Structure probing data (DMS and 2A3) for a 177-nucleotide construct.
The DMS profile rests on 1,819 reads.
Conditions: 150 mM KOAc, 10 mM MgCl2 and 150 mM bicine (pH 8.5), 24 C.
RNA sequence: GGGAACGACUCGAGUAGAGUCGAAAAUCGCGUCAAGCGCCGAAGGCAGGAGCGGGGGACCCAAGGUAAGUGCCGCACCGGGCAGUUGAGCCGGAGCGGCUAGGGGUGGAGCCGAGUUCCGCGAGGACCCGGGAGAAGUUUUCGAACUUCUCCCGGGAAAAGAAACAACAACAACAAC
Reactivity to DMS in 0.01 (KOAc 150mM, MgCl2 10mM, bicine 150mM(pH8.5), 24C), signal-to-noise 1, nucleotides 027 to 126: u040c040g000c040g010u020c060a090a110g000c050g040c010c040g010a060a020g000g000c010a130g000g010a160g040c110g020g000g020g040g000a100c030c000c000a040a080g000g010u000a090a100g000u000g000c010c000g000c020a050c060c010g000g040g020c010a130g050u030u040g000a250g000c000c000g000g000a060g010c000g000g090c010u010a000g000g010g000g000u030g000g000a200g000c060c040g000a090g000u060u030c000c000g000c110g020a080g000g000a240
Reactivity to 2A3 in 0.01 (KOAc 150mM, MgCl2 10mM, bicine 150mM(pH8.5), 24C), signal-to-noise 1, nucleotides 027 to 126: u070c000g000c000g100u110c110a130a030g000c010g000c000c000g070a080a070g010g010c040a040g010g050a040g030c020g000g020g030g000g030a110c000c000c000a000a010g050g070u110a050a080g140u070g050c000c000g000c020a020c010c010g060g080g000c070a150g000u080u060g070a040g060c000c000g000g000a010g000c000g000g000c000u000a030g020g010g030g010u010g020g120a000g000c010c000g000a010g000u050u030c010c010g040c010g040a050g000g050a070